RNA sequence: GGGAACGACUCGAGUAGAGUCGAAAAUAUAAGGCGCUCGCCGAGCUCAAGGGACACCAGGGACCAGUGUGGCAGGUGGCCUGGGCACAUCCCAAGUUUGGCAACAUACUGGCAUCGUGCUCCUACGAUGCUAUUUAGCUUUCGAGCUAAAUAGCAUAAAAGAAACAACAACAACAAC
Reactivity to 2A3 in 0.01 (KOAc 150mM, MgCl2 10mM, bicine 150mM(pH8.5), 24C), signal-to-noise 9, nucleotides 027 to 126: u260a010u050a040a050g050g000c020g000c050u060c080g000c010c010g000a010g000c010u030c120a100a200g020g000g010a030c030a020c050c010a010g040g010g040a050c020c020a080g060u070g030u080g240g060c090a050g020g050u020g050g130c010c000u000g000g010g000c090a040c010a110u040c010c000c000a000a010g020u030u030u040g030g000c030a050a020c010a080u170a060c040u050g030g010c000a040u030c030g040u030g020c020u020c010c000u030a050c060g030
Reactivity to DMS in 0.01 (KOAc 150mM, MgCl2 10mM, bicine 150mM(pH8.5), 24C), signal-to-noise 9, nucleotides 027 to 126: u040a080u040a100a100g010g010c040g030c070u010c100g020c010c010g000a050g000c020u000c090a110a110g000g000g000a050c220a070c010c010a050g000g000g000a080c020c010a070g010u010g020u010g010g010c060a110g000g020u000g000g010c000c000u000g000g000g000c110a090c200a190u010c020c000c000a110a070g000u000u000u000g000g000c070a100a090c100a070u020a070c070u000g000g010c040a040u010c030g010u010g000c060u000c020c020u010a060c130g000
Overview:
This 177-nucleotide RNA was probed chemically with 2A3 and DMS. Conditions: 150 mM KOAc, 10 mM MgCl2 and 150 mM bicine (pH 8.5), 24 C. Values cover nucleotides 27 to 126. For 2A3 the reverse transcriptase was SuperScript II with manganese.